[RMDB]
RNA sequence: GGGAACGACUCGAGUAGAGUCGAAAAAGCAACGAGUGUGUGUGGGACGUUUUAUCCCAAGCUCUGAGUAGAGCACGCGCUCUCACACACCGCGAGCGAGCAUCAGCAGAGCGCAAACGCUGGUAAAAGAAGGUAUGAGUUUCGACUCAUACCUUCUAAAAGAAACAACAACAACAAC
Reactivity to 2A3 in 0.01 (KOAc 150mM, MgCl2 10mM, bicine 150mM(pH8.5), 24C), signal-to-noise 3, nucleotides 027 to 126: a020g100c100a070a050c040g020a120g110u120g010u000g000u000g000u010g040g020g020a010c010g010u000u000u120u220a090u080c010c020c000a030a010g000c000u000c010u050g270a170g180u300a020g160a000g020c030a010c020g010c000g000c050u010c000u010c000a010c000a000c000a000c000c000g000c030g020a010g020c010g000a030g050c010a040u050c010a020g080c000a030g030a030g140c100g010c110a060a020a040c070g000c010u010g000g040u100a070a110a000
Reactivity to DMS in 0.01 (KOAc 150mM, MgCl2 10mM, bicine 150mM(pH8.5), 24C), signal-to-noise 5, nucleotides 027 to 126: a100g020c070a140a060c080g000a110g020u010g000u000g020u000g030u000g000g010g010a040c020g010u000u010u000u010a120u000c030c020c030a060a080g010c000u000c010u000g010a180g030u000a030g010a020g010c010a160c190g000c010g000c160u000c000u000c000a000c000a020c010a000c020c040g000c050g010a150g010c030g010a090g000c060a040u000c020a050g020c050a120g010a080g010c090g010c100a060a080a120c110g000c010u000g000g000u000a060a060a110

Source information
Structure probing data (2A3 and DMS) for a 177-nucleotide construct. The data come from the RNA Mapping Database (RMDB), library M2PK90. For DMS the reverse transcriptase was MarathonRT. Values cover nucleotides 27 to 126. Conditions: 150 mM KOAc, 10 mM MgCl2 and 150 mM bicine (pH 8.5), 24 C. 2A3 adducts were read by reverse transcription with SuperScript II with manganese.